[RMDB]
RNA sequence: GGGAACGACUCGAGUAGAGUCGAAAACCAAGAUUCGUCUUGGCAAGCCGCGUACUACGUCAGAGGCGAUGGGAGAUGAGGGUCCCAAAUAGGACCCUACAUCGAGGAUCAUCGCUACCCACCUGACGUAUCGCACUAGGCGAGGUUCGCCUCGCAACUUUCUGACUUAGUUCGCUAAGUCAGAAAGAAAAGAAACAACAACAACAAC
Reactivity to DMS in 0.01 (KOAc 150mM, MgCl2 10mM, bicine 150mM(pH8.5), 24C), signal-to-noise 2, nucleotides 027 to 156: c000c010a040a030g010a080u010u010c270g040u000c000u000u000g000g010c010a040a160g020c100c050g010c000g020u000a080c090u000a010c010g000u000c010a030g020a190g040g010c000g030a020u000g010g020g020a180g000a030u000g030a150g010g030g010u000c000c000c020a030a130a230u000a060g010g010a030c000c000c000u000a020c020a020u000c020g010a100g040g000a120u000c000a000u000c010g020c000u000a010c020c010c010a300c160c000u010g000a020c010g010u000a000u000c020g000c010a200c040u000a150g000g010c000g010a040g020g010u000u000c070g030c020c000u000c020g030c030a020a120
Reactivity to 2A3 in 0.01 (KOAc 150mM, MgCl2 10mM, bicine 150mM(pH8.5), 24C), signal-to-noise 5, nucleotides 027 to 156: c010c000a000a000g020a020u130u180c230g020u020c150u020u010g030g000c110a090a020g120c060c090g000c050g030u060a120c080u000a000c030g000u010c000a000g010a020g060g000c000g000a000u000g000g000g000a020g000a010u000g000a010g000g000g000u010c000c010c020a130a220a040u230a030g010g000a000c000c000c000u030a170c000a000u000c010g020a110g000g030a010u000c000a000u000c000g000c000u050a070c020c020c020a090c020c010u010g000a000c000g000u000a020u150c020g000c000a050c060u140a060g210g000c000g010a010g030g000u070u130c220g090c060c000u000c000g010c010a010a050